Chemical mapping of a 177-nucleotide RNA with 2A3 and DMS. Source: RMDB libraries RFM100 and RFMREP, as collected in RNAgym. For 2A3, 825 sequencing reads were counted. The RNA was probed in 150 mM KOAc, 10 mM MgCl2 and 150 mM bicine (pH 8.5) at 24 C. For 2A3 the reverse transcriptase was SuperScript II with manganese. Values are in units of 0.01, from 0 to 300, in steps of 10.

RNA sequence: GGGAACGACUCGAGUAGAGUCGAAAAUUAUCAGUCGAAGAUCGAACGUUUAACCAAUAAUGUUCUUCAGAAUAUUUUUAAGCUUUGUUAUGCCACAGUUUACAUGUUACAAUUAAACAUUCUUCACAAUAAGAACACGGUUCGCCGUGUUCUUAUUAAAAGAAACAACAACAACAAC
Reactivity to 2A3 in 0.01 (KOAc 150mM, MgCl2 10mM, bicine 150mM(pH8.5), 24C), signal-to-noise 3, nucleotides 027 to 126: u100u040a040u060c060a050g140u080c070g010a040a020g000a100u130c100g040a020a020c040g000u020u020u140a030a000c030c030a030a080u090a080a020u050g010u040u000c000u090u080c070a070g090a150a030u070a140u020u070u010u080u070a080a030g000c020u070u110u040g030u160u090a070u240g050c070c040a070c010a040g000u010u030u100a090c040a060u050g060u100u130a120c090a250a120u130u040a090a060a010c000a050u000u070c010u070u040c000a010c000
Reactivity to DMS in 0.01 (KOAc 150mM, MgCl2 10mM, bicine 150mM(pH8.5), 24C), signal-to-noise 4, nucleotides 027 to 126: u020u020a050u020c020a060g030u010c040g000a050a080g000a020u010c090g000a050a060c080g020u010u010u000a120a170c200c130a120a050u010a020a030u000g000u000u010c000u010u020c060a100g010a100a060u020a040u010u030u000u000u010a060a140g020c060u010u010u000g000u000u000a050u010g020c040c020a030c090a060g000u000u000u000a030c180a040u020g000u020u040a060c170a070a110u000u020a030a020a040c060a130u000u000c010u000u010c110a080c280